[RMDB]
RNA sequence: GGGAACGACUCGAGUAGAGUCGAAAAGAGGAGCAGGCAGAUAAUCUUGUGCAGUAUGCAUGCUCGUAACUCCAGCGCACAAGUGGACGCACAAGAUUUUAAUCCAGCAUAGCGCAGGAGCCGCAGAAUACCAUCCUGGUUUCGACCAGGAUGGUAUAAAAGAAACAACAACAACAAC
Reactivity to 2A3 in 0.01 (KOAc 150mM, MgCl2 10mM, bicine 150mM(pH8.5), 24C), signal-to-noise 4, nucleotides 027 to 126: g150a020g070g010a010g000c010a040g030g000c020a000g030a090u140a100a020u030c020u030u010g010u000g010c040a060g030u120a040u070g010c010a010u020g000c000u010c010g030u080a030a020c010u000c030c000a000g000c020g000c000a040c010a300a090g160u050g030g030a010c010g010c000a000c000a010a000g000a000u010u000u030u170a080a060u010c010c010a010g040c040a140u060a140g010c020g000c030a030g010g010a010g000c000c010g070c040a030g120a150
Reactivity to DMS in 0.01 (KOAc 150mM, MgCl2 10mM, bicine 150mM(pH8.5), 24C), signal-to-noise 4, nucleotides 027 to 126: g030a080g010g010a020g020c010a010g010g010c000a070g000a120u070a010a030u000c000u010u000g010u000g020c020a260g020u010a080u010g010c000a040u000g000c020u020c010g000u060a080a230c010u000c000c030a120g030c030g010c010a120c180a070a160g000u000g000g000a110c220g000c010a010c000a000a010g000a080u000u020u080u020a110a140u020c030c070a090g010c100a070u010a050g000c000g030c010a040g000g020a010g030c040c050g020c120a120g020a170
The record gives the reactivity of an RNA of 177 nucleotides to 2A3 and DMS.
The RNA was probed in 150 mM KOAc, 10 mM MgCl2 and 150 mM bicine (pH 8.5) at 24 C.
2A3 adducts were read by reverse transcription with SuperScript II with manganese.
DMS adducts were read by reverse transcription with MarathonRT.
It was measured as part of the RMDB library OK1LIB.
For 2A3, 4,057 sequencing reads were counted.
For DMS, 5,953 sequencing reads were counted.